An RNA of 177 nucleotides, treated with DMS and read out base by base. For DMS the reverse transcriptase was MarathonRT. Source: RMDB library RFMREP, as collected in RNAgym.
RNA sequence: GGGAACGACUCGAGUAGAGUCGAAAAAUUGAUGUGGGUUUUAACUUGUUGCCGUUCGGGACGUUGACGAAAUGGAGCGAUUUGACCCGUCUUGAAACACGGACCAAGGAGUCUAACAUGUGUGCAAGGCUGUAAAGAUGUUCGCAUCUUUACAGCCAAAAGAAACAACAACAACAAC
Reactivity to DMS in 0.01 (KOAc 150mM, MgCl2 10mM, bicine 150mM(pH8.5), 24C), signal-to-noise 1, nucleotides 027 to 126: a100u000u000g000a050u000g010u000g000g000g000u000u000u000u000a000a120c090u000u010g010u000u010g020c060c010g030u000u000c090g000g010g050a100c070g010u000u000g020a120c070g010a060a040a160u010g010g020a100g000c040g000a200u000u010u000g000a120c030c050c050g090u040c000u000u010g030a150a090a100c110a190c030g000g000a020c140c030a110a080g000g000a180g020u010c000u000a040a020c070a080u020g010u020g010u020g000c110a060a100
The RNA was probed in 150 mM KOAc, 10 mM MgCl2 and 150 mM bicine (pH 8.5) at 24 C.